[RMDB]
RNA sequence: GGGAACGACUCGAGUAGAGUCGAAAAGAGGGUCACGUGAUCAUGUAGAGCAGUGGCAAGCUGGCCUGGAAAGGUAAAAUCCAAAAUUGAAUAACAUUACGCCAGUCAAGAACUUGCUAGCCCAGGCCCGUCAGGGCUUGUUCGCAAGCCCUGACGGAAAAGAAACAACAACAACAAC
Reactivity to 2A3 in 0.01 (KOAc 150mM, MgCl2 10mM, bicine 150mM(pH8.5), 24C), signal-to-noise 1, nucleotides 027 to 126: g160a050g090g040g040u070c010a010c080g080u060g040a040u010c070a110u200g120u290a050g000a020g030c010a020g000u000g070g000c000a020a000g030c020u030g040g000c070c010u000g030g040a080a040a000g170g000u130a020a030a000a020u080c080c020a010a000a060a200u150u130g070a060a080u220a160a010c050a080u070u120a020c030g040c050c010a010g010u020c020a010a050g010a030a020c010u020u050g020c040u050a030g000c000c000c020a000g010g000c000
Reactivity to DMS in 0.01 (KOAc 150mM, MgCl2 10mM, bicine 150mM(pH8.5), 24C), signal-to-noise 2, nucleotides 027 to 126: g000a130g020g000g000u000c040a040c140g030u000g050a100u020c020a120u010g000u020a070g000a100g010c000a110g030u020g000g000c040a030a070g030c020u000g010g020c060c060u000g000g000a070a120a110g010g020u000a070a020a070a080u010c030c070a020a040a040a210u000u010g020a060a040u030a060a110c100a090u030u000a100c100g000c010c000a010g020u010c030a060a070g020a080a040c060u000u000g030c000u000a100g020c160c020c000a100g020g000c070